[RMDB]
RNA sequence: GGGAACGACUCGAGUAGAGUCGAAAACAGUGGCCGCGUGUUUCCUAUCGCGGAGGACUCGAUUGCCAUCGCGCCGUUCUCGAUUCCUGAAGAAUGGGCGUUGAUUGGCGGGAUGGACUUUGGGUAUGACCACCCGUUCGCUGCGGUCAAAAUGGCCCUCUGCGUGUCGUUUCGACGACACGCAGAGAAAAGAAACAACAACAACAAC
Reactivity to 2A3 in 0.01 (KOAc 150mM, MgCl2 10mM, bicine 150mM(pH8.5), 24C), signal-to-noise 1, nucleotides 027 to 156: c030a040g030u050g030g000c030c020g020c010g020u040g000u000u090u000c040c020u050a020u130c020g000c060g070g020a030g030g000a030c000u070c130g100a130u090u300g040c030c000a040u060c040g020c020g000c200c000g010u080u020c010u000c010g070a140u250u190c050c090u130g120a280a090g040a130a110u130g080g010g000c020g030u000u180g050a060u020u150g050g000c010g000g010g000a020u080g030g030a110c010u030u070u060g000g000g050u110a130u200g080a050c010c010a070c000c030c040g020u040u060c060g020c020u050g050c030g010g000u000c000a160a000a000a000u120g000g010c000c010